RNA sequence: GGGAACGACUCGAGUAGAGUCGAAAAUUGGGUGGUACCCGGCCGGGUCUGAUACCUGGCGUGAUUCCGACCAUGACGCCCCCUCCUGGGAUGGUUCGCCAACGCCCUCGUGCAGGCAUGUUGGCCACACGAGGGGUGAGUUCGCUCACCCCUCGUGAAAAGAAACAACAACAACAAC
Reactivity to DMS in 0.01 (KOAc 150mM, MgCl2 10mM, bicine 150mM(pH8.5), 24C), signal-to-noise 3, nucleotides 027 to 126: u000u010g000g010g020u010g020g000u000a120c030c040c040g020g020c000c030g000g000g020u000c160u030g020a140u010a080c010c010u010g000g010c010g010u010g000a170u010u000c020c000g000a060c000c010a040u000g010a150c250g000c020c010c010c010c030u000c010c030u000g010g000g000a160u000g000g010u010u010c130g000c000c020a010a030c020g010c120c010c020u000c160g010u010g030c130a130g000g010c050a060u030g010u010u010g010g020c010c200a080
Chemical mapping of a 177-nucleotide RNA with DMS. DMS adducts were read by reverse transcription with MarathonRT. The DMS profile rests on 3,075 reads. The data come from the RNA Mapping Database (RMDB), library OK2TRN.